[RMDB]
RNA sequence: GGGAACGACUCGAGUAGAGUCGAAAAUAUCGAUCCUUUAGUUCUUUUGAAUUUUAAGCUAGAGGUGUCAGAAAAGUUACCACAGGGAUAACUGGCUUGUGGCAGCCAAGCGUCCAUAGCGACGUUGAACGUAAGGAGGGUUCGCCCUCCUUACGUUAAAAGAAACAACAACAACAAC
Reactivity to DMS in 0.01 (KOAc 150mM, MgCl2 10mM, bicine 150mM(pH8.5), 24C), signal-to-noise 3, nucleotides 027 to 126: u040a130u000c100g030a050u000c000c000u000u000u030a000g010u030u010c110u000u000u000u020g000a100a080u060u010u030u030a050a080g000c020u000a010g020a010g000g000u030g020u000c070a120g020a040a120a080a070g010u010u000a100c010c010a120c080a000g000g000g020a090u030a060a140c190u010g030g000c030u000u000g000u020g010g000c130a050g000c010c050a110a080g020c040g000u000c010c000a170u030a130g000c080g020a020c010g020u000u000g010
Reactivity to 2A3 in 0.01 (KOAc 150mM, MgCl2 10mM, bicine 150mM(pH8.5), 24C), signal-to-noise 3, nucleotides 027 to 126: u210a010u030c050g010a030u030c000c000u000u000u000a010g000u130u140c000u140u220u070u150g190a180a140u020u170u060u150a130a000g030c010u000a000g000a000g000g040u160g050u060c040a060g080a050a070a000a010g040u050u010a020c020c030a010c050a010g030g020g000a060u070a190a060c080u080g210g010c000u000u050g000u020g050g020c030a000g030c070c010a060a020g030c040g000u000c010c010a180u130a060g140c180g080a000c000g020u020u070g100
An RNA of 177 nucleotides, treated with DMS and 2A3 and read out base by base.